[RMDB]
RNA sequence: GGGAACGACUCGAGUAGAGUCGAAAAAGGACGUCCUCCCUUCCUCCCCUCCGGGUCCUCUUCGUCUCGGACUGGCUCAUCUUCGGAGUGGGGGCGGCGGCGUCUGGUCUCUUAUUUCUUCCUUCUGAACACCAUCACUUCGGUGAUGGUAAAAGAAACAACAACAACAAC
Reactivity to 2A3 in 0.01 (KOAc 150mM, MgCl2 10mM, bicine 150mM(pH8.5), 24C), signal-to-noise 9, nucleotides 027 to 129: a010g030g000a010c010g090u140c000c030u130c020c000c000u140u110c000c010u010c000c000c000c000u000c010c010g030g000g010u030c020c020u070c040u160u100c050g190u050c070u050c130g020g010a030c020u030g040g000c030u030c090a200u030c080u210u140c030g000g000a010g010u070g000g010g000g000g000c030g010g000c010g000g000c000g010u000c000u020g010g020u010c020u000c000u060u080a230u110u100u050c080u090u090c030c000u080u020c010u040g040a040a020c040
Reactivity to DMS in 0.01 (KOAc 150mM, MgCl2 10mM, bicine 150mM(pH8.5), 24C), signal-to-noise 6, nucleotides 027 to 129: a030g000g000a000c070g040u070c010c050u060c000c000c000u070u050c010c000u000c030c020c030c030u010c050c050g060g020g020u030c020c020u000c120u010u000c030g070u040c070u050c100g000g040a050c080u040g060g000c200u020c090a000u000c080u060u020c070g020g010a000g000u040g000g000g000g000g000c300g030g080c250g100g030c050g000u000c020u020g000g000u040c040u040c060u000u000a190u040u050u050c070u000u000c080c000u070u050c060u000g000a040a050c140

Source: RMDB library 15KLIB, as collected in RNAgym.
This 170-nucleotide RNA was probed chemically with 2A3 and DMS.
Conditions: 150 mM KOAc, 10 mM MgCl2 and 150 mM bicine (pH 8.5), 24 C.